[RMDB]
RNA sequence: GGGAACGACUCGAGUAGAGUCGAAAAGCUGCACGUGCGCGCGGCCGUCAACGCCGAGACCCGCACGAUCAGCGGCGUGGGCGUGCCCUACGGCGAGACCAUCACGAUCUGGGGAGAGCGCGAGCGAGACCACUGUGUUGUUCGCAACACAGUGGUCAAAAGAAACAACAACAACAAC
Reactivity to 2A3 in 0.01 (KOAc 150mM, MgCl2 10mM, bicine 150mM(pH8.5), 24C), signal-to-noise 3, nucleotides 027 to 126: g020c010u040g000c060a000c050g010u030g020c020g000c000g000c020g010g020c010c010g110u140c080a050a020c010g010c010c010g040a060g070a110c030c040c030g000c020a030c020g040a210u040c030a020g030c030g000g000c030g030u060g020g010g010c110g060u110g050c040c000c000u050a050c050g030g040c030g000a040g020a060c010c050a060u100c040a010c060g050a130u020c050u070g000g000g000g000a090g010a010g030c020g020c020g010a040g030c040g010a080
Reactivity to DMS in 0.01 (KOAc 150mM, MgCl2 10mM, bicine 150mM(pH8.5), 24C), signal-to-noise 4, nucleotides 027 to 126: g010c040u000g000c130a080c020g030u000g000c050g010c190g020c050g030g020c000c050g020u000c130a100a140c300g010c010c010g000a130g010a170c090c070c030g000c060a030c070g000a050u000c050a080g020c000g010g010c050g020u000g000g000g010c070g030u010g010c030c010c030u000a050c060g010g000c020g000a100g000a110c080c060a080u010c070a080c060g000a070u010c070u010g000g000g000g010a130g000a110g000c040g010c060g000a110g010c080g000a170

Conditions: 150 mM KOAc, 10 mM MgCl2 and 150 mM bicine (pH 8.5), 24 C.
This 177-nucleotide RNA was probed chemically with 2A3 and DMS.
2A3 adducts were read by reverse transcription with SuperScript II with manganese.
The 2A3 profile rests on 4,176 reads.
DMS adducts were read by reverse transcription with MarathonRT.